[RMDB]
RNA sequence: GGGAACGACUCGAGUAGAGUCGAAAACCACACGGGUCCAGUGUGUGCUUGGCGUGUUUUCAGGGAGGCAGAGAAAGGCUCUCCUAAUGCACGACAGACCCGCCCAGAAUGGCCUCUCUGUUCCUAGGAUUUGUUGGGGUUUCGACCCCAACAAAUCAAAAGAAACAACAACAACAAC
Reactivity to 2A3 in 0.01 (KOAc 150mM, MgCl2 10mM, bicine 150mM(pH8.5), 24C), signal-to-noise 2, nucleotides 027 to 126: c010c020a000c000a010c010g020g000g020u010c140c160a160g000u030g000u020g020u020g070c030u040u020g060g030c040g030u000g010u020u090u010u130c080a010g010g010g000a020g030g010c000a000g050a010g110a290a100a030g110g000c060u060c020u030c130c010u040a040a040u080g000c000a000c070g030a010c030a000g030a040c010c000c000g020c020c000c000a020g020a080a180u090g030g000c010c000u000c010u000c000u010g010u050u010c030c030u030a060g060